[RMDB]
RNA sequence: GGGAACGACUCGAGUAGAGUCGAAAAGAUAUGGAUGUACUCCCCACCAGGCACGGUCUGUUAGGAGCAGCUCGGAAACGAGCUGAACUACUCCUUUCAGACCGUGCCUGAGGUACAUCCUAAGUCAGCUUUCUAAUAUGUUCGCAUAUUAGAAAGCAAAAGAAACAACAACAACAAC
Reactivity to DMS in 0.01 (KOAc 150mM, MgCl2 10mM, bicine 150mM(pH8.5), 24C), signal-to-noise 4, nucleotides 027 to 126: g010a120u000a230u010g000g010a030u000g010u000a020c020u010c150c020c010c080a300c130c000a000g000g000c000a010c020g010g000u000c000u000g030u000u010a010g000g000a010g000c010a030g000c000u000c000g000g030a090a150a280c010g020a030g010c000u000g000a010a010c020u020a300c010u010c010c000u000u000u000c000a020g010a000c000c000g020u000g010c000c000u000g000a000g020g000u000a000c020a000u000c000c010u000a020a060g020u020c170a210
Conditions: 150 mM KOAc, 10 mM MgCl2 and 150 mM bicine (pH 8.5), 24 C. Structure probing data (DMS) for a 177-nucleotide construct. Reactivities are rounded to 0.1 and cut off at 0 and 3. The data come from the RNA Mapping Database (RMDB), library TTRINS. DMS adducts were read by reverse transcription with MarathonRT.